Source: RMDB library TTRDES, as collected in RNAgym.
Structure probing data (2A3 and DMS) for a 177-nucleotide construct.
The DMS profile rests on 3,797 reads.
Values are in units of 0.01, from 0 to 300, in steps of 10.
RNA sequence: GGGAACGACUCGAGUAGAGUCGAAAAGAUAUGGAAACGCAAGUUCAAUGACGGCACUGCGUCGGAAACGACGUUGCUAAGACAGAAUGCGUUUCCUAAGUCAAAUCGGGAACCUUCGGGUUCCCGACUAAUCUUGACACUUCGGUGUCAAGAUUAGAAAAGAAACAACAACAACAAC
Reactivity to 2A3 in 0.01 (KOAc 150mM, MgCl2 10mM, bicine 150mM(pH8.5), 24C), signal-to-noise 3, nucleotides 027 to 126: g000a010u020a010u030g000g000a010a000a000c000g000c020a020a160g250u160u000c120a300a300u180g030a030c030g020g040c010a030c160u140g040c020g000u000c000g010g000a020a000a000c000g010a000c000g010u020u010g000c020u060a130a100g120a170c070a050g010a010a010u020g000c000g000u000u000u000c000c000u000a010a010g000u020c020a010a030a300u110c010g000g020g000a000a010c000c000u080u200c300g050g000g000u010u000c020c000c010g000a000
Reactivity to DMS in 0.01 (KOAc 150mM, MgCl2 10mM, bicine 150mM(pH8.5), 24C), signal-to-noise 4, nucleotides 027 to 126: g010a000u000a000u000g000g010a010a010a000c000g000c020a030a080g020u000u000c000a300a140u020g010a030c040g010g000c000a050c300u010g000c010g010u000c000g010g010a010a010a020c000g020a010c000g010u000u000g030c000u000a010a200g020a180c060a080g020a010a030u000g000c000g010u000u000u000c000c000u000a010a080g010u000c000a100a150a250u000c000g010g010g010a020a000c000c000u000u010c250g030g020g000u000u000c000c000c000g010a010